[RMDB]
RNA sequence: GGGAACGACUCGAGUAGAGUCGAAAAGGCUGCGUAUCACUCUAGGGUACGUGAUAGUGCGAUAUUAGAAGCACUGGUACAUGCCGGCAGGGACAGUUAAGAGAUGGCCGCAGUCUCGUGUCCCUGCAAAAGGAGUUCUCGUUCGCGAGAACUCCAAGAAUAAGGCAAAGUUCGCUUUGCCUUAUUCAAAAGAAACAACAACAACAAC
Reactivity to 2A3 in 0.01 (KOAc 150mM, MgCl2 10mM, bicine 150mM(pH8.5), 24C), signal-to-noise 9, nucleotides 027 to 156: g020g000c020u020g000c020g010u000a010u020c030a080c190u150c160u210a120g040g020g030u020a000c020g010u020g040a070u110a050g000u000g010c020g030a030u030a160u250u230a140g050a140a020g000c000a000c010u010g010g030u130a080c050a050u140g010c000c010g010g000c000a000g010g000g000a000c000a060g040u130u200a180a030g020a000g000a010u040g090g050c080c040g050c100a020g010u000c010u000c000g020u020g000u000c000c000c000u000g000c000a000a000a000a010g000g000a000g000u000u000c000u000c000g020u060u050c180g010c000g120a000g000a000a000c000u000c000c000a000a000
Reactivity to DMS in 0.01 (KOAc 150mM, MgCl2 10mM, bicine 150mM(pH8.5), 24C), signal-to-noise 4, nucleotides 027 to 156: g020g010c010u010g010c010g010u000a070u010c020a110c080u010c100u000a150g030g030g010u000a030c020g020u020g010a080u000a000g020u000g010c000g000a170u000a130u000u000a160g000a220a300g020c010a030c010u010g020g020u000a050c070a070u020g020c020c010g010g000c010a010g030g010g010a030c010a090g010u000u000a080a100g000a080g010a060u000g030g020c070c180g010c090a260g010u000c010u000c010g020u000g010u000c000c000c000u010g000c010a020a020a080a100g010g000a030g000u000u000c010u010c000g020u000u000c250g010c020g020a030g000a020a010c000u000c000c000a010a090